[RMDB]
RNA sequence: GGGAACGACUCGAGUAGAGUCGAAAAACCCUUGAGUUAGCGGCUCAGGUGGAUUCGUCUAUCCUAUGGCCGAUCCCCUUGGAGGGAACCGUUUUAUUGCAUGACCGUCGAUGUUACCGCAUCGGCGCACAUAAGUAUCCUUCGGGAUACUUAUGUGAAAAGAAACAACAACAACAAC
Reactivity to 2A3 in 0.01 (KOAc 150mM, MgCl2 10mM, bicine 150mM(pH8.5), 24C), signal-to-noise 6, nucleotides 027 to 126: a000c020c000c000u020u100g100a100g040u080u120a050g050c020g020g010c010u010c060a010g030g040u090g040g000a020u060u070c120g030u010c070u050a180u230c010c020u100a170u230g010g000c010c000g030a030u040c010c000c000c000u040u150g160g030a120g030g030g030a020a020c000c010g040u040u050u110u180a210u150u170g080c130a110u170g100a110c030c010g000u000c000g000a010u000g020u050u130a120c020c040g000c010a010u000c030g000g010c010g000
Reactivity to DMS in 0.01 (KOAc 150mM, MgCl2 10mM, bicine 150mM(pH8.5), 24C), signal-to-noise 9, nucleotides 027 to 126: a070c010c000c010u010u010g010a070g010u000u010a100g010c040g010g010c010u000c260a050g010g020u010g010g010a040u000u010c280g010u000c020u000a060u010c090c080u000a110u010g000g010c010c010g000a060u000c030c040c040c030u000u010g020g020a110g010g000g010a060a110c060c030g010u000u000u000u000a090u020u010g010c150a060u010g010a080c200c000g020u000c000g000a010u000g000u000u010a140c300c280g000c010a000u000c000g010g000c000g000